[RMDB]
RNA sequence: GGGAACGACUCGAGUAGAGUCGAAAAUAGUGAGACUUCCAAACAAGCCUGAAGUGUUGUUAAGAAGAUUGGAAGAUGGAAGAUGAUGAGAUCAAGUUCAUGAGAGGGAUCGGAGAUUUCCAUCUCAAAUCCAAAGACACUUCGGUGUCUUUGGAUUAAAAGAAACAACAACAACAAC
Reactivity to DMS in 0.01 (KOAc 150mM, MgCl2 10mM, bicine 150mM(pH8.5), 24C), signal-to-noise 2, nucleotides 027 to 126: u000a100g030u010g030a140g010a150c040u000u040c030c030a070a120a030c090a080a090g000c000c020u000g020a130a040g010u000g000u000u000g010u000u020a110a090g010a120a130g000a090u000u000g000g040a080a040g020a040u000g000g020a050a040g030a080u010g010a190u010g020a060g000a080u020c030a040a110g000u000u000c140a050u000g000a140g000a070g010g010g000a030u000c040g000g000a120g000a080u000u000u000c010c000a030u010c020u000c020a040
Description
An RNA of 177 nucleotides, treated with DMS and read out base by base. For DMS the reverse transcriptase was MarathonRT. It was measured as part of the RMDB library OK2TST. The reactions ran in a buffer of 150 mM KOAc, 10 mM MgCl2 and 150 mM bicine (pH 8.5), at 24 C.